[RMDB]
Structure probing data (2A3 and DMS) for a 177-nucleotide construct. The RNA was probed in 150 mM KOAc, 10 mM MgCl2 and 150 mM bicine (pH 8.5) at 24 C. 2A3 adducts were read by reverse transcription with SuperScript II with manganese. Source: RMDB library OK1LIB, as collected in RNAgym. DMS (dimethyl sulfate) methylates the pairing face of unpaired adenines and cytosines.

RNA sequence: GGGAACGACUCGAGUAGAGUCGAAAAGCAUUACAAGGCGGAAAUGUCCGUCAUCAUCGGCGACGAUCUCCUGAAGGAGAAUUUUCCACUGGUGCACACUGUGGGACGUGCCAGCGCCGAUGCGCCGAAUAGCCUACCAGUUCGCUGGUAGGCUAUUAAAAGAAACAACAACAACAAC
Reactivity to 2A3 in 0.01 (KOAc 150mM, MgCl2 10mM, bicine 150mM(pH8.5), 24C), signal-to-noise 4, nucleotides 027 to 126: g000c000a010u100u170a250c070a160a160g000g000c020g000g120a090a090a190u270g120u020c050c000g000u000c020a040u040c010a010u000c020g040g000c020g010a090c040g030a090u000c020u000c000c030u230g170a200a110g020g020a010g050a060a090u130u050u070u030c020c000a020c030u040g030g000u100g040c070a010c040a020c100u200g010u210g090g090g020a070c020g020u050g030c100c010a040g000c000g000c000c000g000a000u030g000c020g010c000c010g030
Reactivity to DMS in 0.01 (KOAc 150mM, MgCl2 10mM, bicine 150mM(pH8.5), 24C), signal-to-noise 4, nucleotides 027 to 126: g000c130a110u020u030a080c200a110a140g000g000c030g000g000a040a180a060u020g000u010c010c000g030u000c060a100u040c020a000u000c010g010g010c010g000a100c120g000a170u000c000u000c000c000u000g070a180a180g050g000a010g030a030a060u020u020u010u000c010c040a110c040u010g000g010u010g010c140a140c150a070c050u020g000u030g000g000g000a080c160g000u000g000c090c140a100g000c010g000c000c010g020a020u000g000c150g000c060c020g000